[RMDB]
RNA sequence: GGGAACGACUCGAGUAGAGUCGAAAAUUAGAAGGUGGUGGCCGACCAGUCCAACGCGAAACCGUGGACGAAAGUGUGCUUCGCUGGUUUCGGGAUCAACGAGAGAAAAAAUUCCGUGUGAGCAGAACUCACCACUAUGAUUCGUCAUAGUGGUGAGAAAAGAAACAACAACAACAAC
Reactivity to DMS in 0.01 (KOAc 150mM, MgCl2 10mM, bicine 150mM(pH8.5), 24C), signal-to-noise 5, nucleotides 027 to 126: u010u070a090g010a100a100g010g020u000g010g030u000g000g020c030c000g010a080c070c070a130g010u000c000c010a050a080c110g000c050g010a080a050a110c190c030g050u010g000g000a030c050g010a070a060a090g000u020g010u030g010c050u010u000c040g030c030u000g010g000u010u000u000c050g000g000g000a040u010c050a070a080c080g010a080g010a090g000a000a030a070a080a060a080u010u000c040c020g010u020g010u010g000a070g030c070a080g000a120a160
Reactivity to 2A3 in 0.01 (KOAc 150mM, MgCl2 10mM, bicine 150mM(pH8.5), 24C), signal-to-noise 6, nucleotides 027 to 126: u220u120a080g050a140a030g040g020u070g010g020u030g050g020c020c040g010a030c010c010a020g020u010c020c010a090a070c060g050c030g090a060a010a020c040c010g020u030g030g020a020c020g060a070a090a090g140u170g040u080g060c030u050u060c030g010c030u080g020g000u000u050u040c000g010g020g020a050u070c030a020a080c070g040a020g020a010g100a180a120a020a010a000a060u110u030c030c030g010u050g030u060g060a030g020c020a010g030a080a050

This 177-nucleotide RNA was probed chemically with DMS and 2A3. Source: RMDB library OK1LIB, as collected in RNAgym. For 2A3 the reverse transcriptase was SuperScript II with manganese. The reactions ran in a buffer of 150 mM KOAc, 10 mM MgCl2 and 150 mM bicine (pH 8.5), at 24 C. Values cover nucleotides 27 to 126.